[RMDB]
RNA sequence: GGGAACGACUCGAGUAGAGUCGAAAACGGUCUCGAUACGUGAACGCCUUAUGAGACUGUUAUGAACGGAAGGAGUCGUAGUACACGUGAAUCGAGCCACGGAAGCACAGCUGCAUUCGGAUGAAUGAUCUAGUCAACGGUUCGCCGUUGACUAGAUAAAAGAAACAACAACAACAAC
Reactivity to 2A3 in 0.01 (KOAc 150mM, MgCl2 10mM, bicine 150mM(pH8.5), 24C), signal-to-noise 1, nucleotides 027 to 126: c000g020g110u040c000u030c000g050a000u070a120c000g000u000g030a030a000c040g030c040c000u030u080a160u140g020a030g000a000c000u000g010u050u040a000u070g030a080a000c000g040g030a000a040g080g040a000g040u000c000g040u040a100g000u070a010c030a030c030g030u010g020a070a000u000c050g000a000g000c000c000a000c000g000g000a040a000g000c000a060c000a020g010c060u090g000c000a000u080u000c000g020g050a040u030g090a050a060u120g000
Reactivity to DMS in 0.01 (KOAc 150mM, MgCl2 10mM, bicine 150mM(pH8.5), 24C), signal-to-noise 3, nucleotides 027 to 126: c060g000g000u010c000u000c020g030a040u000a030c030g020u000g010a070a080c050g000c070c020u010u030a070u040g000a110g000a040c040u000g000u020u020a000u040g000a110a090c030g000g010a160a100g000g010a070g010u000c040g010u000a040g000u010a110c000a020c010g000u000g000a070a060u000c020g000a030g000c000c010a190c110g020g010a100a080g010c030a000c040a090g020c000u010g010c010a030u000u000c030g000g000a090u010g030a050a030u010g000
Background:
An RNA of 177 nucleotides, treated with 2A3 and DMS and read out base by base. 2A3 is a SHAPE reagent: it acylates the 2'-hydroxyl of flexible nucleotides of all four kinds. DMS adducts were read by reverse transcription with MarathonRT. For 2A3 the reverse transcriptase was SuperScript II with manganese. Reactivities are given for positions 27 through 126.